Source: RMDB library OK1LIB, as collected in RNAgym. Chemical mapping of a 177-nucleotide RNA with DMS and 2A3. The reactions ran in a buffer of 150 mM KOAc, 10 mM MgCl2 and 150 mM bicine (pH 8.5), at 24 C. Reactivities are given for positions 27 through 126.

RNA sequence: GGGAACGACUCGAGUAGAGUCGAAAAGAAGAGAGUAGAAGAUGGCCGACAUGGUCCCAGCCCCUCGCUGGCGCCGGCUGGGCAACACCAUUGCACUCCGGUGGCGUAUGGUACAAGAGAGAAAGAAAUUAUGAGGACCAUUCGUGGUCCUCAUAAUAAAAGAAACAACAACAACAAC
Reactivity to DMS in 0.01 (KOAc 150mM, MgCl2 10mM, bicine 150mM(pH8.5), 24C), signal-to-noise 5, nucleotides 027 to 126: g000a080a050g010a070g000a030g020u000a030g010a060a060g010a060u020g020g020c050c030g000a090c090a070u050g010g000u020c070c020c020a070g000c010c040c070c050u010c130g000c030u020g000g020c100g020c050c070g000g030c110u000g000g000g010c160a070a060c150a100c150c180a140u000u010g000c030a040c050u010c050c030g010g000u010g000g020c080g000u010a040u020g000g010u020a050c050a060a060g000a050g010a110g000a070a090a080g010a070a070
Reactivity to 2A3 in 0.01 (KOAc 150mM, MgCl2 10mM, bicine 150mM(pH8.5), 24C), signal-to-noise 4, nucleotides 027 to 126: g080a080a020g030a000g020a020g020u150a010g000a110a010g050a080u100g030g010c030c010g050a110c080a100u130g050g030u070c020c000c000a000g000c010c010c000c030u050c050g040c040u050g030g030c010g010c020c000g000g020c080u020g010g000g000c030a040a000c040a010c110c000a070u020u080g010c010a010c020u000c010c020g000g050u050g020g000c010g020u070a060u070g020g040u100a030c050a080a040g060a010g040a000g080a160a040a000g140a030a200